This 177-nucleotide RNA was probed chemically with 2A3.
RNA sequence: GGGAACGACUCGAGUAGAGUCGAAAAUCGUCUUAAUUCGUUAAGACGAACUCACGGAUUGUGUCCGUAAUCACAGAAAUAAUAUAAAACUAACAAAAUAAAAUCAUCUCAUGUUCGCAUGAGAUAAGAUCGAUUCUAGAUUCGUCUAGAAUCGAUCAAAAGAAACAACAACAACAAC
Reactivity to 2A3 in 0.01 (KOAc 150mM, MgCl2 10mM, bicine 150mM(pH8.5), 24C), signal-to-noise 2, nucleotides 027 to 126: u010c000g030u000c000u000u040a030a020u090u040c120g030u030u020a010a000g000a000c010g000a020a000c010u000c000a000c030g010g050a180u120u110g040u020g050u060c000c000g040u090a030a050u050c000a000c000a020g160a110a270a030u190a110a070u180a070u120a210a120a130a040c020u110a090a040c020a030a150a090a090u300a150a070a010a120u130c050a020u070c000u000c000a010u000g040u030u070c180g020c070a000u000g010a000g000a010u010a010a010
2A3 adducts were read by reverse transcription with SuperScript II with manganese.